[RMDB]
RNA sequence: GGGAACGACUCGAGUAGAGUCGAAAAAGCCACAUUCAUACAUUUAUCAAACAUUAUUGUCACAAAAUGGACUGAGACGCAGUCAGUUCCUAUUGGUGCAGAGCACAUGAUUGGUAGGACAGAAGAAGUGCUAUAAAAAUAAAUAAUGUGUGCAGUAUGCACUAGUAGGUUUCGACCUACUAGUGCAAAAAGAAACAACAACAACAAC
Reactivity to 2A3 in 0.01 (KOAc 150mM, MgCl2 10mM, bicine 150mM(pH8.5), 24C), signal-to-noise 3, nucleotides 027 to 156: a000g020c010c000a000c010a000u100u110c050a010u120a170c040a020u070u140u150a100u110c130a060a180a080c050a060u060u150a060u070u200g160u150c030a010c030a130a150a100a080u100g010g000a000c010u000g010a030g030a060c110g000c090a020g050u020c000a000g050u110u110c000c000u070a040u060u040g150g000u000g000c020a000g020a000g090c000a010c000a090u080g010a070u160u190g010g050u070a030g000g120a000c010a060g060a050a000g010a120a060g050u000g020c000u060a060u210a160a090a010a010a000u110a010a020a000u120a020a010u040g000u000g010u040g010c010a020g080u260a100
Reactivity to DMS in 0.01 (KOAc 150mM, MgCl2 10mM, bicine 150mM(pH8.5), 24C), signal-to-noise 1, nucleotides 027 to 156: a030g000c000c020a040c020a110u000u000c020a150u000a180c010a120u000u000u020a210u030c030a140a030a100c030a090u000u000a080u000u000g010u000c020a030c050a000a070a060a100u030g000g000a040c010u090g000a130g030a180c090g010c140a150g090u000c010a130g050u000u000c000c010u000a160u000u000g000g000u000g020c030a030g030a140g000c020a080c070a010u010g020a020u000u000g040g020u010a030g010g010a150c040a090g000a090a150g000a060a130g000u000g020c010u000a090u030a010a090a100a050a170u020a080a100a080u000a070a080u000g010u000g000u000g000c010a180g020u020a090
Chemical mapping of a 207-nucleotide RNA with 2A3 and DMS.
Conditions: 150 mM KOAc, 10 mM MgCl2 and 150 mM bicine (pH 8.5), 24 C.
2A3 adducts were read by reverse transcription with SuperScript II with manganese.